[RMDB]
RNA sequence: GGGAACGACUCGAGUAGAGUCGAAAAGAUAUGGACGCACCAGCUUUUGACGAAAGCUCGGAAACGAGCAAUUUCGAUAAGCUGGGCGUCCUAAGUCAAAAGCUGAGAGGGUUCGCCCUCUCAGCAACUAGGGGAAUGAGUUCGCUCAUUCCCCUAGAAAAGAAACAACAACAACAAC
Reactivity to 2A3 in 0.01 (KOAc 150mM, MgCl2 10mM, bicine 150mM(pH8.5), 24C), signal-to-noise 3, nucleotides 027 to 126: g020a010u100a050u090g010g000a000c000g020c090a300c180c000a010g050c020u110u120u160u300g130a030c000g010a000a030a100g210c010u000c010g040g020a040a050a030c000g020a010g000c000a110a270u020u040u020c020g100a130u050a300a020g000c000u010g010g010g010c000g000u000c000c000u000a000a000g000u000c000a060a040a040a140g010c000u010g010a010g000a000g100g040g010u090u260c280g130c010c010c000u000c010u000c020a000g000c010a000a010
Reactivity to DMS in 0.01 (KOAc 150mM, MgCl2 10mM, bicine 150mM(pH8.5), 24C), signal-to-noise 2, nucleotides 027 to 126: g010a030u000a300u000g000g000a030c000g000c010a150c020c020a010g000c000u000u000u010u000g000a170c150g020a020a050a110g000c000u010c010g000g010a050a060a140c000g010a000g000c000a080a080u000u000u000c000g000a220u000a010a000g020c010u010g010g000g020c010g000u000c000c000u000a000a050g000u010c040a120a090a120a090g030c010u020g000a020g010a010g000g000g010u000u000c210g010c010c000c020u000c000u000c010a000g000c000a000a010